[RMDB]
RNA sequence: GGGAACGACUCGAGUAGAGUCGAAAAUCUCCUUGUCGGUGAACCCGCUCUUGUGAGGCCUCUUCAUAGGUCCGGAGUCGACCUCCAUCUGAUCUGUUCGGGCCCUCUUCGCCGGGGGAGCUCCCUCCUAAUUAUCUUCGUUCGCGAAGAUAAUUAGAAAAGAAACAACAACAACAAC
Reactivity to DMS in 0.01 (KOAc 150mM, MgCl2 10mM, bicine 150mM(pH8.5), 24C), signal-to-noise 4, nucleotides 027 to 126: u010c010u000c000c010u010u010g010u010c020g030g010u000g020a040a080c130c090c050g020c120u020c100u000u010g010u010g010a110g010g000c050c000u000c090u010u010c120a060u010a050g000g010u010c030c270g010g000a040g010u010c150g010a100c200c010u000c010c010a110u000c160u010g010a050u010c050u000g000u000u000c300g000g000g000c110c020c010u020c020u000u000c020g010c030c020g000g000g000g000g000a050g000c220u000c010c000c000u000c090
Reactivity to 2A3 in 0.01 (KOAc 150mM, MgCl2 10mM, bicine 150mM(pH8.5), 24C), signal-to-noise 3, nucleotides 027 to 126: u030c000u000c000c000u020u020g150u110c010g000g010u030g010a040a040c020c030c030g080c050u080c040u130u190g080u040g060a130g040g000c020c030u050c040u210u090c060a090u090a130g030g000u020c030c040g030g010a010g020u100c100g110a160c030c010u030c010c000a080u030c110u130g030a030u030c020u040g060u050u030c030g000g050g000c000c010c020u010c030u050u010c000g000c020c000g000g000g000g010g020a000g010c010u010c000c000c000u020c000
The data come from the RNA Mapping Database (RMDB), library 15KREP. Chemical mapping of a 177-nucleotide RNA with DMS and 2A3.